[RMDB]
Structure probing data (2A3) for a 207-nucleotide construct.
The 2A3 profile rests on 443 reads.
The reactions ran in a buffer of 150 mM KOAc, 10 mM MgCl2 and 150 mM bicine (pH 8.5), at 24 C.

RNA sequence: GGGAACGACUCGAGUAGAGUCGAAAAAGGAAUUCAUGGCCUGUUCCUGUGGCUUGCUGUCACUGCAUUGGACAGUGAGGACAUAUAUGUACCUGAGGACAAUGCAUUUUUAAAAAGAAGUGGAUUUCAAACAUUUUUGUCUAAGGCCUAGAAUUUAUCGUGGAUAUGCUUUCGAGCAUAUCCACGAAAAAGAAACAACAACAACAAC
Reactivity to 2A3 in 0.01 (KOAc 150mM, MgCl2 10mM, bicine 150mM(pH8.5), 24C), signal-to-noise 1, nucleotides 027 to 156: a000g070g000a040a010u050u000c030a080u160g030g000c000c010u030g030u000u010c030c010u010g030u020g070g020c060u030u060g000c020u010g050u020c080a070c300u170g020c030a150u040u080g040g020a000c000a000g030u030g200a030g010g030a050c030a000u160a000u040a100u190g080u110a120c020c030u030g080a070g040g000a000c050a040a000u020g040c000a050u010u000u000u070u140a100a240a080a000a000g060a090a020g040u040g060g040a080u000u170u300c160a040a120a010c020a030u140u070u000u050u020g010u080c030u080a050a000g000g000c030c000u020a060g070a040a090u140u170u080a090